[RMDB]
RNA sequence: GGGAACGACUCGAGUAGAGUCGAAAAGGGGUCGACCCGAAGCGACCCUAAGAGCUUGGAUUUAUUACGCUGAAGCCUCCACGGCGUAAUUGUCAGCUCUUAUGUGCUCGUUUUUGGGUCGACGGAGGCACCCAAAAGACCGAGUUCGCUCGGUCAAGUCUUCUUAGGAGUUCGCUCCUAAGAAGACAAAAGAAACAACAACAACAAC
Reactivity to 2A3 in 0.01 (KOAc 150mM, MgCl2 10mM, bicine 150mM(pH8.5), 24C), signal-to-noise 3, nucleotides 027 to 156: g050g010g020g000u000c010g000a000c000c000c000g000a000a010g000c010g010a020c040c000c000u000a010a000g010a000g000c100u190u300g170g000a040u260u300u140a010u100u060a010c000g000c010u010g050a200a020g040c010c020u010c030c020a030c030g000g010c020g000u000a000a000u010u020g030u030c050a020g000c000u000c020u010u000a040u090g080u100g030c120u010c040g020u030u120u010u150u300g000g000g000u010c000g000a000c000g000g000a000g010g000c010a070c000c010c020a010a110a000a040g000a000c010c000g010a010g010u050u120c170g060c120u010c000g000g000u010c000a000a000

Source: RMDB library RNAMAK, as collected in RNAgym.
Chemical mapping of a 207-nucleotide RNA with 2A3.
The reactions ran in a buffer of 150 mM KOAc, 10 mM MgCl2 and 150 mM bicine (pH 8.5), at 24 C.
For 2A3, 2,944 sequencing reads were counted.
Reactivities are given for positions 27 through 156.